[RMDB]
RNA sequence: GGGAACGACUCGAGUAGAGUCGAAAAGGGGUCACUGGGAGAGAAUAUCACAGCCGAGGAUCUAUACUGAAGCCUCCACGGUAUAGGGAGGCUGUGUAUUCUCAUCGAUCAGUGACGGAGGCACCCAAACUUGGUGUGGGUUCGCCCACACCAAGAACCGUAUGUCCUACUUCGGUAGGACAUACGGAAAAGAAACAACAACAACAAC
Reactivity to 2A3 in 0.01 (KOAc 150mM, MgCl2 10mM, bicine 150mM(pH8.5), 24C), signal-to-noise 2, nucleotides 027 to 156: g030g000g090g000u000c010a010c010u010g010g000g000a070g010a010g000a000a000u070a060u270c020a000c010a000g000c010c000g030a300g000g000a000u000c000u000a010u000a000c010u020g050a080a000g010c000c000u010c000c010a020c000g000g000u000a000u000a000g020g010g000a010g000g030c000u010g000u000g000u000a000u000u020c010u000c000a050u290c010g000a020u010c010a000g000u000g000a000c000g010g010a000g000g000c020a060c010c000c000a090a100a080c020u020u040g060g010u050g020u020g010g060g010u110u300c190g130c300c000c300a000c020a000c300c000a000a000g270a000a010
About this RNA:
This 207-nucleotide RNA was probed chemically with 2A3. The reactions ran in a buffer of 150 mM KOAc, 10 mM MgCl2 and 150 mM bicine (pH 8.5), at 24 C. For 2A3 the reverse transcriptase was SuperScript II with manganese. Source: RMDB library RNAMAK, as collected in RNAgym.